[RMDB]
RNA sequence: GGGAACGACUCGAGUAGAGUCGAAAAGUGAGUCCUUACGAGGACUCACAAUAAAUUCAGCGGUAAUUCGACCGCAAAUAUUACCGCUGAUGCGGUCGAAAAAGCUGCUACGUACGCGUAGCAGCAACGCGACUUUUACUUUCGAGUAAAAGUCGCGAAAAGAAACAACAACAACAAC
Reactivity to 2A3 in 0.01 (KOAc 150mM, MgCl2 10mM, bicine 150mM(pH8.5), 24C), signal-to-noise 1, nucleotides 027 to 126: g010u000g000a010g000u010c000c020u050u040a090c300g030a010g000g000a000c000u000c000a000c000a000a000u030a000a040a010u110u000c020a010g030c010g020g040u030a060a090u070u090c050g020a060c000c000g070c050a040a030a000u100a050u070u160a000c040c050g000c100u060g000a000u030g000c020g010g010u000c020g010a080a000a020a070a040g000c000u000g000c060u000a000c010g020u010a000c300g000c000g080u000a000g050c060a010g000c000a000a000